[RMDB]
RNA sequence: GGGAACGACUCGAGUAGAGUCGAAAAGUGGGUCAGUAGGUUGAGAUAGUUGUGCGCCAGCUCGUUACUGAGGAUGUUCGUGCCGUCAUUAAUACGCAGGAUGCAAAUCCCUACUGGCGCCGACGCCACGUAAUCGCGAGUUCGCUCGCGAUUACGUAAAAGAAACAACAACAACAAC
Reactivity to 2A3 in 0.01 (KOAc 150mM, MgCl2 10mM, bicine 150mM(pH8.5), 24C), signal-to-noise 2, nucleotides 027 to 126: g060u040g000g050g000u010c000a000g010u010a010g020g110u050u170g000a000g000a060u050a080g000u000u020g120u050g060c010g020c000c000a000g040c000u010c060g130u150u020a100c080u070g010a010g060g070a050u070g060u070u160c170g000u140g040c070c030g090u000c000a090u020u000a080a060u080a120c060g000c030a080g000g070a080u110g000c000a010a140a030u000c000c000c000u000a010c030u020g000g000c000g000c000c000g030a030c020g030c030c000
Reactivity to DMS in 0.01 (KOAc 150mM, MgCl2 10mM, bicine 150mM(pH8.5), 24C), signal-to-noise 1, nucleotides 027 to 126: g050u050g010g000g030u030c030a020g020u000a030g000g040u010u030g010a080g000a080u020a020g040u000u010g010u040g030c010g100c030c000a040g020c070u000c100g020u000u060a040c120u050g000a080g000g000a150u030g010u000u000c070g030u000g000c020c010g000u020c010a120u000u000a050a020u050a060c130g010c080a070g000g010a060u020g040c070a110a030a110u000c020c020c020u030a130c010u000g000g000c000g040c000c000g000a050c010g000c090c090